RNA sequence: GGGAACGACUCGAGUAGAGUCGAAAAUAUGUAUCACUAUUAACGUCACCAGAUUGAAAUGUACCGGCUAGAUGAAGACUAUUUGAUCAGCUAGUUACUUCUAUCGAAUAAAGUGGCCAAAACCAACCGGUAAGAGAUUGUUCGCAAUCUCUUACCGAAAAGAAACAACAACAACAAC
Reactivity to DMS in 0.01 (KOAc 150mM, MgCl2 10mM, bicine 150mM(pH8.5), 24C), signal-to-noise 1, nucleotides 027 to 126: u000a030u000g000u000a100u020c160a080c090u000a020u020u000a110a080c190g050u000c030a060c030c070a150g010a080u010u000g020a000a040a060u010g040u020a030c020c030g000g000c010u000a080g030a010u000g010a050a050g020a170c130u020a160u010u000u000g000a010u020c070a030g000c090u020a080g010u000u010a050c010u000u000c000u000a000u010c040g000a100a110u020a030a030a140g000u010g000g000c010c100a000a030a060a150c060c080a030a070c230